[RMDB]
RNA sequence: GGGAACGACUCGAGUAGAGUCGAAAAGGUUCUCGACCGUGGACACGCUGAAGGUUCCAAGUACAUCGACUUCGGUAUUGUCGACUGCCAGUCCCCGAACUCCCGCGUAUUCGGUUCCGAUCGGGAACUUGUUGAGUGCAUCAUGCUCGACAUCAAGGAGAGUCUUACCAUUCGUGGUAAGACUCUCAAAAGAAACAACAACAACAAC
Reactivity to 2A3 in 0.01 (KOAc 150mM, MgCl2 10mM, bicine 150mM(pH8.5), 24C), signal-to-noise 2, nucleotides 027 to 156: g050g000u050u020c010u020c010g050a030c000c030g000u180g050g010a030c030a010c090g010c030u040g040a050a020g110g040u040u000c030c010a070a020g080u090a120c100a120u060c050g040a030c040u030u080c140g080g000u180a080u070u230g050u070c030g000a050c010u000g040c050c020a050g090u070c060c030c000c000g020a070a080c020u070c030c030c000g030c010g030u070a090u120u190c070g050g020u030u000c000c020g040a080u060c010g040g000g000a010a000c000u000u020g020u000u010g010a010g000u050g040c010a090u090c080a030u300g020c000u000c000g040a020c010a080u130c040a100a000g200
Reactivity to DMS in 0.01 (KOAc 150mM, MgCl2 10mM, bicine 150mM(pH8.5), 24C), signal-to-noise 1, nucleotides 027 to 156: g040g010u000u010c030u000c010g000a020c010c000g080u010g020g020a000c020a050c080g070c040u010g030a080a040g030g000u000u010c010c030a070a160g010u010a120c080a090u000c040g030a020c010u000u020c060g010g000u000a230u010u010g000u000c000g000a050c080u020g040c000c050a240g000u000c030c010c080c040g050a030a120c030u000c030c020c040g010c060g020u000a130u000u000c140g030g000u000u050c080c000g000a030u020c030g080g010g000a010a030c000u000u010g000u000u000g000a040g030u010g000c090a170u010c160a200u000g000c000u000c000g030a040c060a060u020c090a060a140g030

This 207-nucleotide RNA was probed chemically with 2A3 and DMS. It was measured as part of the RMDB library OK3TST. DMS adducts were read by reverse transcription with MarathonRT. Reactivities are given for positions 27 through 156.